An RNA of 207 nucleotides, treated with DMS and 2A3 and read out base by base.
RNA sequence: GGGAACGACUCGAGUAGAGUCGAAAAGGCUGAUGCCGGAGCCGAUACCGGAAUACGAGACCUUAUGUGCGGUCGAAUGCACUGAAGUACGAAAGUACGAAGAGGUCACACCGAGGACCGAGACUCGAUAUGCUCGCUAGAUGGAGCUUUACAUCAAACGGUAUACGGAUUUCGAUCCGUAUACCGUAAAAGAAACAACAACAACAAC
Reactivity to DMS in 0.01 (KOAc 150mM, MgCl2 10mM, bicine 150mM(pH8.5), 24C), signal-to-noise 1, nucleotides 027 to 156: g000g000c010u020g010a110u000g000c010c070g000g060a110g040c030c110g020a270u000a080c050c060g010g000a060a100u000a120c040g000a180g020a050c000c000u000u020a060u000g020u000g020c020g030g000u000c170g000a220a140u010g020c000a030c010u010g040a170a200g030u030a000c000g000a150a130a220g000u010a010c020g000a120a140g010a190g000g000u000c020a080c110a190c010c020g000a030g010g000a110c000c040g020a140g000a150c060u010c040g000a090u000a000u000g020c010u000c030g060c040u000a090g020a120u000g030g010a100g010c020u000u000u010a090c110a030u010c000a110a160
Reactivity to 2A3 in 0.01 (KOAc 150mM, MgCl2 10mM, bicine 150mM(pH8.5), 24C), signal-to-noise 2, nucleotides 027 to 156: g030g000c070u050g070a120u170g080c010c000g020g000a000g040c000c070g080a010u040a120c040c000g000g030a060a010u100a130c080g050a080g010a160c020c010u010u070a040u140g020u000g000c040g000g010u050c030g050a040a030u120g030c010a000c010u090g050a090a000g000u000a000c010g050a090a010a020g000u000a010c030g040a100a040g010a010g000g000u020c010a000c000a000c030c030g000a060g000g050a000c000c060g010a030g020a050c010u010c000g060a080u050a010u240g010c000u020c030g030c080u080a090g030a080u060g040g000a010g000c000u080u100u030a070c030a020u050c070a100a110
2A3 adducts were read by reverse transcription with SuperScript II with manganese. Conditions: 150 mM KOAc, 10 mM MgCl2 and 150 mM bicine (pH 8.5), 24 C.